RNA sequence: GGGAACGACUCGAGUAGAGUCGAAAACAUUGCCGAUGGGGCCGAACUUCUCAUCGGCCAUCAGUUCGGAAAAGCCGAUGAUCGCAUUGAGCGGCGUGCGGAUUUCAUGGCUGAUGCGCGCCAGAAAAUUUAUUUAUCGAUUCGUCGAUAAAUAAAUAAAAGAAACAACAACAACAAC
Reactivity to DMS in 0.01 (KOAc 150mM, MgCl2 10mM, bicine 150mM(pH8.5), 24C), signal-to-noise 9, nucleotides 027 to 126: c080a120u010u000g030c010c000g010a020u000g010g000g010g020c170c090g000a090a140c200u000u010c010u000c000a030u000c000g000g000c000c020a000u000c010a020g010u010u010c090g010g000a050a030a040a120g010c000c000g000a100u000g000a090u010c010g010c020a230u010u010g010a160g020c030g010g000c090g010u000g010c010g000g010a110u000u000u000c050a110u000g000g000c000u000g010a040u000g000c120g020c130g010c060c050a140g000a050a060a090
Reactivity to 2A3 in 0.01 (KOAc 150mM, MgCl2 10mM, bicine 150mM(pH8.5), 24C), signal-to-noise 8, nucleotides 027 to 126: c010a080u050u140g010c010c000g000a010u010g000g010g000g030c050c090g200a060a050c050u150u030c010u030c000a010u000c000g020g010c010c000a000u010c000a000g010u130u220c020g020g050a030a020a030a040g040c010c010g010a020u050g060a140u070c010g000c050a060u090u300g130a070g080c010g010g000c010g010u080g080c000g000g020a020u010u050u040c060a080u140g020g000c000u000g010a010u010g020c090g000c030g030c030c010a050g130a040a130a020